[RMDB]
RNA sequence: GGGAACGACUCGAGUAGAGUCGAAAAAUAAACUUUCUGGUACCAAGCACACAUAUCAGCUAGAAAGCUAUUAAAUAGUCAAAGAGGCAGAUAAUGAUGACUCGGACUAAGGUCAUUAUCCAAAAACAUUGAGGUGGUAAGAAAUGGUCAAAUUUAGCGUUGUACACUCAUUCGUGAGUGUACAACGAAAAGAAACAACAACAACAAC
Reactivity to DMS in 0.01 (KOAc 150mM, MgCl2 10mM, bicine 150mM(pH8.5), 24C), signal-to-noise 2, nucleotides 027 to 156: a090u020a000a020a030c040u000u000u000c010u020g040g000u010a080c040c020a140a170g000c030a110c070a060c010a110u000a040u000c110a150g010c080u010a060g010a020a100a050g020c060u000a040u000u000a070a060a190u010a100g000u000c040a060a080a060g020a140g020g000c040a060g010a060u000a020a020u010g000a110u000g010a090c030u000c060g010g010a150c110u000a020a050g040g020u000c030a040u030u000a040u000c000c080a080a100a100a030a070c060a150u000u000g010a090g000g000u000g000g000u000a040a060g010a040a070a100u010g030g000u010c070a070a050a180u000u000u000a130g020
Reactivity to 2A3 in 0.01 (KOAc 150mM, MgCl2 10mM, bicine 150mM(pH8.5), 24C), signal-to-noise 3, nucleotides 027 to 156: a000u090a000a070a010c030u040u030u030c010u040g040g000u040a060c080c020a080a020g050c060a060c000a010c000a080u130a040u300c080a020g050c000u020a020g060a040a050a000g000c040u010a040u030u110a040a090a090u140a050g050u070c020a020a120a070g070a040g020g020c050a010g010a110u060a120a030u090g020a010u040g040a040c040u030c120g040g020a050c090u070a030a040g080g010u000c010a010u010u010a030u020c000c000a050a120a050a000a020c020a030u030u040g030a050g010g050u010g020g000u010a040a020g040a060a040a030u070g030g000u060c040a040a110a090u100u190u080a070g010
The data come from the RNA Mapping Database (RMDB), library OK3TST. The record gives the reactivity of an RNA of 207 nucleotides to DMS and 2A3. For 2A3, 1,757 sequencing reads were counted. DMS adducts were read by reverse transcription with MarathonRT. 2A3 adducts were read by reverse transcription with SuperScript II with manganese. Values cover nucleotides 27 to 156.